[RMDB]
RNA sequence: GGGAACGACUCGAGUAGAGUCGAAAAACGCAUAGCCUGGUACGCCAGGCUAUGCGAACUCAGGGAGUUCUGUACGCCGCUGAGUGGUAUUGCUCGCUUAGUGGAGCGAUUUACUCCCCAGAUUUAAACACAUGAAUGUUUUCGAACAUUCAUGUGUAAAAGAAACAACAACAACAAC
Reactivity to DMS in 0.01 (KOAc 150mM, MgCl2 10mM, bicine 150mM(pH8.5), 24C), signal-to-noise 5, nucleotides 027 to 126: a100c000g000c000a000u000a000g020c010c000u000g000g020u000a100c240g030c010c000a010g010g010c000u000a000u010g010c000g000a020a010c010u000c030a170g000g010g000a020g010u000u000c090u010g000u030a110c050g020c000c000g000c000u000g000a010g030u000g000g020u020a080u020u030g010c180u020c010g010c010u000u010a030g020u020g010g010a150g000c020g010a110u000u010u010a030c010u010c000c000c000c180a050g010a150u020u010u030a120a090
Reactivity to 2A3 in 0.01 (KOAc 150mM, MgCl2 10mM, bicine 150mM(pH8.5), 24C), signal-to-noise 8, nucleotides 027 to 126: a000c010g010c000a010u000a000g000c000c000u000g010g010u070a060c250g050c030c010a000g010g000c000u000a000u000g000c010g010a000a000c000u010c020a000g000g010g000a000g000u070u000c010u040g090u140a090c010g000c010c000g000c020u010g000a050g010u090g010g000u230a230u230u300g070c090u080c070g000c010u010u020a010g000u030g080g020a060g000c010g000a000u020u000u050a010c000u010c000c000c000c000a010g020a070u070u150u190a140a180
The record gives the reactivity of an RNA of 177 nucleotides to DMS and 2A3. It was measured as part of the RMDB libraries RFM100 and RFMREP. Reactivities are given for positions 27 through 126.